[RMDB]
RNA sequence: GGGAACGACUCGAGUAGAGUCGAAAAGAUAUGGAAUUGAUGCUCGAUAAGUCGCAUUCGGAAACGAAUGGCGACUUUUGACGAGCUACCAAUUCCUAAGUCAAAGACUGGUCUUCGGACCAGUCAACAAUUAACGCGUGUUCGCACGCGUUAAUUGAAAAGAAACAACAACAACAAC
Reactivity to 2A3 in 0.01 (KOAc 150mM, MgCl2 10mM, bicine 150mM(pH8.5), 24C), signal-to-noise 1, nucleotides 027 to 126: g020a010u070a070u120g020g010a000a000u020u010g010a000u070g040c000u010c050g150a140u070a290a000g010u000c000g020c010a000u020u030c000g020g030a080a040a040c010g000a010a020u060g240g010c010g000a010c020u000u000u000u010g030a010c030g000a000g020c000u020a060c000c020a000a000u020u000c000c000u010a120a040g020u040c000a000a120a150g000a010c000u010g010g010u020c000u040u080c300g060g000a000c000c000a020g000u020c000a000a000
Reactivity to DMS in 0.01 (KOAc 150mM, MgCl2 10mM, bicine 150mM(pH8.5), 24C), signal-to-noise 3, nucleotides 027 to 126: g000a030u000a300u000g000g000a010a000u000u010g000a030u000g000c000u010c000g030a140u000a030a010g000u000c000g030c000a040u000u010c020g010g000a120a090a150c020g010a010a020u000g000g020c000g010a000c000u000u000u000u000g010a280c160g000a020g020c000u010a010c120c010a000a010u000u000c000c000u010a020a090g010u000c040a190a190a140g000a010c000u000g000g010u000c000u000u010c270g040g000a000c000c000a000g010u000c000a020a080